[RMDB]
The data come from the RNA Mapping Database (RMDB), library M2PK50. Chemical mapping of a 177-nucleotide RNA with 2A3 and DMS. The reactions ran in a buffer of 150 mM KOAc, 10 mM MgCl2 and 150 mM bicine (pH 8.5), at 24 C. For 2A3 the reverse transcriptase was SuperScript II with manganese. DMS adducts were read by reverse transcription with MarathonRT. Values cover nucleotides 27 to 126.
RNA sequence: GGGAACGACUCGAGUAGAGUCGAAAAAGUAUCUAAUUCGUUAGAUACUCGGGGACGGGUGAGGCGGCCGUGUGCGCAGACUGUGCUCCAGCCGCGCGCGCGAAUUUCGCCUAUUCGUAGGCGAAAACUCUACAAGUGGGUUCGCCCACUUGUAGAGAAAAGAAACAACAACAACAAC
Reactivity to 2A3 in 0.01 (KOAc 150mM, MgCl2 10mM, bicine 150mM(pH8.5), 24C), signal-to-noise 1, nucleotides 027 to 126: a010g010u010a000u000c000u000a080a000u060u100c140g050u050u000a010g000a000u010a000c000u000c010g050g000g000g050a050c100g040g070g030u140g020a060g000g110c120g010g050c070c030g000u070g000u020g000c030g000c030a000g050a190c060u060g040u130g040c010u010c020c020a000g000c000c000g000c000g040c010g000c000g000c000g020a030a040u010u040u010c000g000c010c010u030a030u020u030c220g040u020a000g000g000c000g010a010a030a090a100
Reactivity to DMS in 0.01 (KOAc 150mM, MgCl2 10mM, bicine 150mM(pH8.5), 24C), signal-to-noise 2, nucleotides 027 to 126: a000g010u000a000u010c000u000a000a000u000u000c140g010u000u000a010g000a020u000a000c000u000c070g010g020g000g000a160c130g010g000g020u010g010a110g020g000c070g010g000c100c000g010u000g040u000g020c000g030c020a100g010a080c100u000g020u020g000c150u010c080c040a020g000c010c040g020c020g010c010g000c010g000c020g020a070a140u000u000u000c000g010c000c010u000a030u010u010c180g020u000a030g000g010c020g010a000a020a040a140